[RMDB]
RNA sequence: GGGAACGACUCGAGUAGAGUCGAAAAGCAGUUCCACAGUCUGUGGACUGUGAAUACUAGCGGUCAGUCGUCGUCCACAGACGACGUGAAGUGAUUAUGAGAAUGAUCACACUGACGACGUAUUCUCAUAUGUCCUAUCGCUAGGAACUGGAUAGGCCCUACCCGAGUGGUUCGCCACUCGGGUAGGAAAAGAAACAACAACAACAAC
Reactivity to 2A3 in 0.01 (KOAc 150mM, MgCl2 10mM, bicine 150mM(pH8.5), 24C), signal-to-noise 1, nucleotides 027 to 156: g070c000a000g000u060u000c000c000a070c060a020g040u020c050u100g140u090g100g000a000c000u000g000u010g040a010a050u150a010c060u070a070g300c130g060g030u050c020a010g000u030c000g000u000c010g000u010c090c000a210c060a120g010a040c000g000a020c010g000u010g180a070a010g020u020g000a000u000u010a000u020g020a010g090a160a010u050g030a020u010c000a000c010a000c000u020g030a010c040g010a020c020g060u050a000u020u000c070u000c040a000u000a100u190g030u060c020c000u010a050u050c030g040c100u060a020g070g030a010a000c020u020g000g020a070u090a140g070g050c010
Structure probing data (2A3) for a 207-nucleotide construct. The data come from the RNA Mapping Database (RMDB), library OK3TST. Values are in units of 0.01, from 0 to 300, in steps of 10.